This 177-nucleotide RNA was probed chemically with DMS and 2A3. The DMS profile rests on 10,875 reads. 2A3 adducts were read by reverse transcription with SuperScript II with manganese. The 2A3 profile rests on 19,526 reads. In probing experiments dimethyl sulfate is read out at A N1 and C N3, which are open when not base-paired. The reactions ran in a buffer of 150 mM KOAc, 10 mM MgCl2 and 150 mM bicine (pH 8.5), at 24 C. High 2A3 reactivity points to a flexible backbone, as in loops and unpaired stretches.
[RMDB]
RNA sequence: GGGAACGACUCGAGUAGAGUCGAAAAGAUAUGGAGCCACUGCCCUUAUCUUCAACAGCAAUGCUCGGAAACGAGCAUUGACAUGAAGUGGGUUGGCUCCUAAGUCAAAAUCGCACUUCGGUGCGAAUCUACUAAAAAUGUUCGCAUUUUUAGUAGAAAAAGAAACAACAACAACAAC
Reactivity to DMS in 0.01 (KOAc 150mM, MgCl2 10mM, bicine 150mM(pH8.5), 24C), signal-to-noise 8, nucleotides 027 to 126: g000a050u000a300u000g000g010a010g020c000c010a050c300u010g020c010c000c010u010u010a090u010c010u000u000c020a040a110c300a200g000c000a000a000u000g000c010u000c000g020g000a080a080a240c010g000a010g010c000a000u000u000g010a030c070a210u010g000a020a010g020u000g000g000g020u000u000g020g010c000u000c000c000u000a020a090g010u010c030a070a060a100a130u000c000g000c010a020c000u000u020c170g030g010u000g000c000g010a020a070
Reactivity to 2A3 in 0.01 (KOAc 150mM, MgCl2 10mM, bicine 150mM(pH8.5), 24C), signal-to-noise 6, nucleotides 027 to 126: g020a000u050a030u160g000g000a000g000c010c030a070c260u230g030c020c040c020u130u220a190u200c050u130u070c050a190a160c040a140g050c000a010a000u000g000c000u000c000g020g030a070a070a040c020g020a010g010c000a010u000u000g000a000c010a090u140g020a070a020g050u090g010g020g000u040u030g010g000c010u000c000c000u000a010a000g000u000c010a000a000a020a300u060c010g000c000a000c000u050u090c300g170g000u000g000c010g000a000a050